[RMDB]
RNA sequence: GGGAACGACUCGAGUAGAGUCGAAAAGGCUAAGUCCGUUCAACAAGAUCUUGACGUUAUUUUGCCUGGUGAGUUUUCCAAGAAGCAGUUAGGACUGCUCCAACCUACUGACAAUUCUACAACUGUUAAGCCUGAAUCUUCGGAUUCAGGAAAAGAAACAACAACAACAAC
Reactivity to DMS in 0.01 (KOAc 150mM, MgCl2 10mM, bicine 150mM(pH8.5), 24C), signal-to-noise 8, nucleotides 027 to 129: g000g050c030u030a050a020g030u000c170c020g030u050u040c030a020a050c160a070a110g030a060u010c100u000u000g000a010c040g030u030u050a000u000u000u000u010g000c030c000u010g030g050u000g030a090g000u020u010u010u010c030c060a110a090g020a060a100g030c010a000g020u020u030a000g030g030a030c050u000g030c010u010c090c000a090a060c030c030u000a050c030u000g010a020c080a040a090u000u010c010u000a080c180a070a050c090u000g020u050u050a090a090g000
Reactivity to 2A3 in 0.01 (KOAc 150mM, MgCl2 10mM, bicine 150mM(pH8.5), 24C), signal-to-noise 9, nucleotides 027 to 129: g000g000c030u050a010a000g020u000c020c000g040u090u090c010a040a050c030a090a050g050a170u070c030u040u050g020a010c010g020u070u110a070u030u030u050u110g050c000c000u020g010g020u110g030a100g020u030u030u040u000c020c000a020a030g030a030a010g040c010a010g010u060u110a040g060g060a080c030u040g030c010u020c010c000a050a060c010c010u060a060c030u050g090a070c040a070a110u060u030c020u080a070c030a130a040c030u030g060u220u140a050a010g070
This 170-nucleotide RNA was probed chemically with DMS and 2A3. Reactivities are given for positions 27 through 129. Reactivities are rounded to 0.1 and cut off at 0 and 3. For 2A3, 45,783 sequencing reads were counted. It was measured as part of the RMDB library 15KLIB.